[RMDB]
RNA sequence: GGGAACGACUCGAGUAGAGUCGAAAAAGCAUUAAGCCAAGCACAGGACCCUUCUAAGCACUGGGCACUGUGUGACUGUAUAGUAUGCAUACUCACGAAGCUGACCCUGUCAGAAGGUCUCAGGGCCCGUUUUAGCGCGUUUCGACGCGCUAAAACGAAAAGAAACAACAACAACAAC
Reactivity to DMS in 0.01 (KOAc 150mM, MgCl2 10mM, bicine 150mM(pH8.5), 24C), signal-to-noise 2, nucleotides 027 to 126: a130g030c030a000u000u000a080a150g000c050c040a190a300g000c000a040c060a140g000g000a160c010c030c020u050u000c070u080a050a090g030c160a050c190u000g000g010g060c300a020c000u050g010u010g000u000g010a060c190u050g000u000a050u000a070g020u000a300u000g030c040a010u000a080c120u000c000a000c110g000a110a010g000c060u060g000a130c110c040c000u040g000u000c080a100g040a080a180g010g000u010c000u000c070a070g060g000g000c010c080
Reactivity to 2A3 in 0.01 (KOAc 150mM, MgCl2 10mM, bicine 150mM(pH8.5), 24C), signal-to-noise 2, nucleotides 027 to 126: a000g070c040a050u110u110a010a000g000c020c000a020a000g020c000a000c000a000g090g090a220c010c000c000u020u000c080u160a100a000g030c050a070c230u060g000g000g030c100a020c050u070g000u000g070u060g090a030c080u130g090u010a090u030a170g190u100a030u050g050c010a000u010a090c010u020c030a000c110g010a090a000g060c010u030g160a150c020c040c000u020g060u030c020a080g010a110a010g090g000u080c080u010c050a030g050g000g070c010c020